[RMDB]
RNA sequence: GGGAACGACUCGAGUAGAGUCGAAAAGAUAUGGAACGGACCCAGAUGCGGACUAAGCUCGGAAACGAGAACGCGUCCGAACUACAUCUGCCGUUCCUAAGUCAAAACACAACCUUCGGGUUGUGAAGACUGCCCUAAGGUUCGCCUUAGGGCAGUCAAAAGAAACAACAACAACAAC
Reactivity to DMS in 0.01 (KOAc 150mM, MgCl2 10mM, bicine 150mM(pH8.5), 24C), signal-to-noise 1, nucleotides 027 to 126: g000a100u010a300u010g020g030a000a010c000g010g060a260c150c250c110a010g000a040u000g000c020g020g000a030c030u000a260a090g010c010u000c000g010g000a050a110a190c000g000a000g000a050a060c170g020c190g000u020c000c000g000a020a060c110u020a300c060a010u010c000u000g040c000c000g000u000u000c000c000u020a010a100g010u000c010a170a040a140a160c020a000c030a000a000c000c000u000u000c260g000g000g040u000u000g010u000g010a040a040